This 177-nucleotide RNA was probed chemically with 2A3. The RNA was probed in 150 mM KOAc, 10 mM MgCl2 and 150 mM bicine (pH 8.5) at 24 C. Values cover nucleotides 27 to 126. Reactivities are rounded to 0.1 and cut off at 0 and 3. For 2A3 the reverse transcriptase was SuperScript II with manganese.

RNA sequence: GGGAACGACUCGAGUAGAGUCGAAAAGUUGCGGUGCCCGACGAGGUGCCCCCGCAGGUGGCCGCACUACUGGGAUGCGCGGUGUUGACCGGCGGAGGCGCGGUGCUCAAUGUCGGCAAGCCGGUAGGGUGGUGGUGGUGUUCGCACCACCACCACCAAAAGAAACAACAACAACAAC
Reactivity to 2A3 in 0.01 (KOAc 150mM, MgCl2 10mM, bicine 150mM(pH8.5), 24C), signal-to-noise 2, nucleotides 027 to 126: g170u170u120g150c040g010g000u000g130c000c000c000g050a000c010g040a190g010g020u060g000c010c000c000c000c010g050c000a000g100g050u060g190g000c010c000g000c000a000c000u200a020c110u090g180g000g050a180u140g220c100g000c030g230g070u190g010u250u180g300a000c000c000g000g000c010g050g000a080g000g050c020g000c000g180g000u210g000c040u060c060a070a030u220g030u000c000g000g100c000a060a130g020c000c000g000g100u060a060g040